[RMDB]
RNA sequence: GGGAACGACUCGAGUAGAGUCGAAAAGUGUGUCGCUACGGACACGUAUCGUAGCUCUGAUCGUUGAGCCGAAUCCUAGGGCUCUUUCUAGGGAUUUUUAAACCUAAGAUCUGGGUAUUUAAGAAAAGGGUUAAGAUAACUUCGGUUAUCUUAACCCAAAAGAAACAACAACAACAAC
Reactivity to 2A3 in 0.01 (KOAc 150mM, MgCl2 10mM, bicine 150mM(pH8.5), 24C), signal-to-noise 3, nucleotides 027 to 126: g130u090g000u030g030u030c000g000c220u190a020c040g050g000a010c020a010c040g060u120a110u160c120g040u040a030g000c020u000c000u050g070a060u030c020g040u050u030g010a010g000c000c000g040a040a030u070c050c020u050a030g110g010g000c000u000c000u020u070u020c070u010a020g020g020g030a040u100u060u000u060u300a140a110a060c010c000u040a090a040g010a010u000c020u040g000g000g050u050a240u100u280u160a110a070g120a030a030a000a040
Reactivity to DMS in 0.01 (KOAc 150mM, MgCl2 10mM, bicine 150mM(pH8.5), 24C), signal-to-noise 2, nucleotides 027 to 126: g010u020g000u050g000u000c060g020c200u050a090c220g000g000a050c120a020c080g030u040a030u000c080g000u020a110g020c000u020c090u000g000a040u020c010g010u000u000g000a060g020c000c010g060a040a110u020c000c070u010a040g000g000g030c040u000c020u010u000u040c090u000a000g000g020g030a070u000u010u000u040u030a010a100a260c000c000u000a020a080g020a010u020c020u000g000g000g040u000a040u010u020u030a070a080g000a080a060a090a260